[RMDB]
RNA sequence: GGGAACGACUCGAGUAGAGUCGAAAAACAGUACCAGCUGCUACGGCAGCUGGUACUGAACUUUCAUGGAGUUAAGAAACCACGUAAACAAAGCGUAACCGAAAAGCUAAACGAGUAGGAAGAAUAAAUAGGUACCACCACUUCGGUGGUGGUACAAGAUAAGUAUAUACUUCGGUAUAUACUUAUCAAAAGAAACAACAACAACAAC
Reactivity to DMS in 0.01 (KOAc 150mM, MgCl2 10mM, bicine 150mM(pH8.5), 24C), signal-to-noise 2, nucleotides 027 to 156: a160c020a020g020u000a020c020c000a070g090c000u010g080c000u000a070c300g060g000c010a040g010c020u000g000g010u000a000c010u010g010a020a040c080u000u000u000c040a130u000g030g000a260g000u000u000a050a220g010a080a100a160c000c010a050c050g030u000a070a070a070c070a130a060a110g040c100g020u000a120a070c040c030g000a020a000a090a130g030c020u000a030a070a120c030g010a090g030u000a070g010g000a100a070g000a090a040u000a020a070a110u000a140g020g020u000a010c020c010a020c000c000a020c020u000u010c300g020g010u020g020g040u000g030g020u000a000c000a020a060
Reactivity to 2A3 in 0.01 (KOAc 150mM, MgCl2 10mM, bicine 150mM(pH8.5), 24C), signal-to-noise 4, nucleotides 027 to 156: a010c000a000g020u010a000c010c010a000g010c000u020g000c010u030a030c210g170g000c000a000g040c000u000g060g010u000a000c000u000g000a000a000c000u010u090u060c020a080u080g100g030a060g030u120u100a140a040g090a090a050a010c020c030a040c090g060u150a090a080a080c070a090a170a000g010c000g030u040a090a050c020c000g020a010a020a010a010g020c050u170a170a050a010c010g010a000g020u020a010g100g060a040a030g040a070a060u210a130a040a010u120a080g170g000u010a000c000c000a000c000c000a000c010u060u060c240g070g000u000g000g000u000g000g000u000a000c000a000a000
An RNA of 207 nucleotides, treated with DMS and 2A3 and read out base by base. The RNA was probed in 150 mM KOAc, 10 mM MgCl2 and 150 mM bicine (pH 8.5) at 24 C. For DMS the reverse transcriptase was MarathonRT. For 2A3 the reverse transcriptase was SuperScript II with manganese.